[RMDB]
RNA sequence: GGGAACGACUCGAGUAGAGUCGAAAAGCGUGAUGUAGAUCAAGAAACAAAUGUGGUAGAGACGGCGUUCCUAAACUAUGUGAUGGAAGUAGUGCCAGUCCACUCUUCGAAGCGUGUCGUAUGUGAAACGUUGUUAACGGUUCGCCGUUAACAACGUAAAAGAAACAACAACAACAAC
Reactivity to DMS in 0.01 (KOAc 150mM, MgCl2 10mM, bicine 150mM(pH8.5), 24C), signal-to-noise 5, nucleotides 027 to 126: g030c050g020u000g000a050u010g000u000a060g010a040u010c040a100a070g000a080a050a050c100a060a100a100u000g030u000g000g020u000a100g010a150g010a050c070g010g000c040g010u000u010c000c010u010a110a090a080c100u010a090u000g030u000g000a140u000g010g010a060a030g000u020a030g010u000g030c020c080a170g010u000c070c010a050c030u000c050u010u000c020g000a110a140g020c060g010u000g010u000c050g010u000a060u000g000u000g000a100a100
Reactivity to 2A3 in 0.01 (KOAc 150mM, MgCl2 10mM, bicine 150mM(pH8.5), 24C), signal-to-noise 3, nucleotides 027 to 126: g040c030g060u080g050a070u080g050u110a020g030a100u080c080a100a060g070a110a120a020c080a030a110a060u150g060u070g090g000u060a050g000a010g000a160c030g030g020c010g010u000u020c010c000u000a060a030a070c080u080a100u260g050u020g010a020u100g030g020a040a030g010u220a020g020u050g120c020c020a020g010u010c010c010a000c010u050c040u080u060c050g050a050a010g060c030g000u030g060u060c050g000u060a120u190g150u000g090a060a070